[RMDB]
RNA sequence: GGGAACGACUCGAGUAGAGUCGAAAAGAAACAUGGUUCGCCAUGUUUCAAAGAAGCUCAUAAUGACGCAAACAACGGGGUCGCCGUGAGCAAACGGCGAAAAAAGACUUAUCUUCGGAUAAGUCAACAAUCUCAUAUACUUCGGUAUAUGAGAUUGAAAAGAAACAACAACAACAAC
Reactivity to DMS in 0.01 (KOAc 150mM, MgCl2 10mM, bicine 150mM(pH8.5), 24C), signal-to-noise 8, nucleotides 027 to 126: g000a000a010a000c000a000u000g000g010u000u010c230g020c010c000a010u000g010u000u000u000c000a050a090a110g010a120a110g010c020u000c020a120u010a090a100u010g010a070c110g020c050a120a080a050c040a030a050c030g000g000g000g000u000c000g010c000c000g000u000g010a130g020c190a080a090a020c010g000g010c010g000a000a030a050a070a070a050g000a020c000u000u000a000u000c000u000u010c220g020g000a010u000a000a000g010u000c000a060a110
Reactivity to 2A3 in 0.01 (KOAc 150mM, MgCl2 10mM, bicine 150mM(pH8.5), 24C), signal-to-noise 7, nucleotides 027 to 126: g000a000a010a000c000a000u010g000g030u030u060c130g030c050c000a000u000g000u010u010u000c000a000a000a000g070a050a020g030c000u010c060a080u140a300a100u250g060a030c080g000c070a060a080a060c020a040a060c050g020g000g000g010u000c010g000c000c010g010u020g030a060g080c060a130a100a010c000g000g000c000g010a110a020a000a010a000a010g010a000c000u000u010a000u010c010u020u020c050g000g000a000u000a000a000g000u000c000a000a000